[RMDB]
RNA sequence: GGGAACGACUCGAGUAGAGUCGAAAACGAGGUGCGGUAGGCCUCGUUAACAAACCGCAAAAAUAUAGUCGCAAACGACGAAAACUACGCACUCGCAGCUUAAUAACCUGCGCUGAGCCCUUCUCCCAAAACUGAGGUAGGUUCGCCUACCUCAGAACCCCAUUACCGUGUUCGCACGGUAAUGGGGAAAAGAAACAACAACAACAAC
Reactivity to 2A3 in 0.01 (KOAc 150mM, MgCl2 10mM, bicine 150mM(pH8.5), 24C), signal-to-noise 2, nucleotides 027 to 156: c000g000a000g000g000u090g070c050g010g080u030a020g020g090c000c010u000c000g000u000u020a000a000c020a010a080a010c040c030g040c110a000a030a000a220a000u190a070u070a060g070u040c000g030c150a080a260a150c100g100a000c000g130a000a050a110a040c070u160a020c040g010c050a060c050u040c040g000c000a000g000c000u100u040a050a000u080a090a050c000c000u000g020c030g090c140u050g060a030g000c000c000c080u120u070c090u070c010c020c010a000a170a000a000c010u010g000a000g000g000u010a010g000g000u000u040c030g030c040c000u030a030c000c000u020c000a000g000a000a000